[RMDB]
RNA sequence: GGGAACGACUCGAGUAGAGUCGAAAAAUGACUUUAUUGCUGCACAAUUCAAAUACUUUUCUUUCUACAACAUGUAUAUAGUCACCCAGAAAGCAGACUACCCGAAUAUCCAGCACUUACUUUACGACCUACACAGGAGUUUCAGUAACGUGAAGUAACGACUUUUAAUAUUCGUAUUAAAAGUCGUAAAAGAAACAACAACAACAAC
Reactivity to 2A3 in 0.01 (KOAc 150mM, MgCl2 10mM, bicine 150mM(pH8.5), 24C), signal-to-noise 6, nucleotides 027 to 156: a000u050g020a030c020u070u130u100a090u140u110g010c030u040g000c030a030c040a130a160u140u120c070a120a170a110u130a180c070u110u150u110u120c070u070u150u060c090u140a100c030a150a020c020a130u160g030u060a040u010a000u020a110g030u020c020a040c020c000c020a020g120a040a060a020g010c020a010g020a050c040u050a070c030c020c000g070a060a040u060a060u120c050c010a020g040c020a040c040u040u050a010c000u020u060u020a020c010g060a130c020c010u060a040c080a010c020a080g070g020a090g040u030u060u060c060a040g020u050a050a060c030g020u030g040a040a020g020u030a030
Reactivity to DMS in 0.01 (KOAc 150mM, MgCl2 10mM, bicine 150mM(pH8.5), 24C), signal-to-noise 2, nucleotides 027 to 156: a150u000g020a090c050u010u000u000a030u020u010g010c020u010g040c010a110c070a110a100u010u030c070a080a050a150u000a050c040u010u000u000u000c020u000u000u000c030u000a050c000a030a040c020a040u000g000u000a100u000a080u000a060g020u000c020a120c040c000c020a140g010a070a070a070g030c030a070g010a070c050u000a070c010c040c040g020a080a110u010a090u000c040c060a090g020c020a030c050u000u000a020c030u000u000u000a050c050g010a110c020c010u010a050c070a120c020a090g000g020a190g020u000u000u000c070a080g020u010a070a120c070g020u010g000a020a080g010u000a080
The data come from the RNA Mapping Database (RMDB), library OK3TST.
The record gives the reactivity of an RNA of 207 nucleotides to 2A3 and DMS.
For 2A3, 3,710 sequencing reads were counted.
The RNA was probed in 150 mM KOAc, 10 mM MgCl2 and 150 mM bicine (pH 8.5) at 24 C.